[RMDB]
RNA sequence: GGGAACGACUCGAGUAGAGUCGAAAACAGGUCGAUAGUACCAAUAACCCUGGUACCAAUAAGGUACUAUCGACCAUUUAGCUCUUCUUCUACAACACGCUCGCUGAAGAAGAGCGUUUCUGGUACCAGGGCAGCGAGCGGAAGGCCGAGAGGCCGACAUUUACCUAUACUUCGGUAUAGGUAAAUGAAAAGAAACAACAACAACAAC
Reactivity to 2A3 in 0.01 (KOAc 150mM, MgCl2 10mM, bicine 150mM(pH8.5), 24C), signal-to-noise 5, nucleotides 027 to 156: c020a010g000g000u000c000g000a000u010a000g000u000a010c000c080a080a160u200a160a130c000c000c000u010g010g010u010a010c020c030a100a170u160a250a110g010g000u000a000c000u000a000u000c000g000a000c000c000a000u040u050u110a020g000c000u000c000u000u000c000u020u020c020u080a110c020a230a030c090a070c110g010c000u000c010g000c010u010g010a020a010g010a010a000g000a020g010c000g000u020u150u050c060u030g000g000u000a010c000c000a000g000g000g000c000a000g000c000g000a000g000c000g000g020a050a030g000g000c000c010g050a040g010a040g090g000c000c000g000a000
Reactivity to DMS in 0.01 (KOAc 150mM, MgCl2 10mM, bicine 150mM(pH8.5), 24C), signal-to-noise 2, nucleotides 027 to 156: c020a080g020g000u000c010g010a030u000a010g010u000a040c020c020a180a140u010a140a080c010c020c000u010g020g020u000a000c010c010a120a190u010a120a120g000g030u000a020c010u000a010u000c020g020a010c010c010a000u000u010u000a110g000c000u000c000u000u000c010u000u000c030u020a090c090a100a080c040a100c020g020c010u000c020g030c020u000g010a050a030g000a070a010g020a010g010c000g020u000u000u000c130u000g000g000u000a030c010c000a050g030g010g050c040a010g010c010g010a040g050c010g010g020a170a100g010g020c000c000g000a300g010a300g020g020c000c010g000a140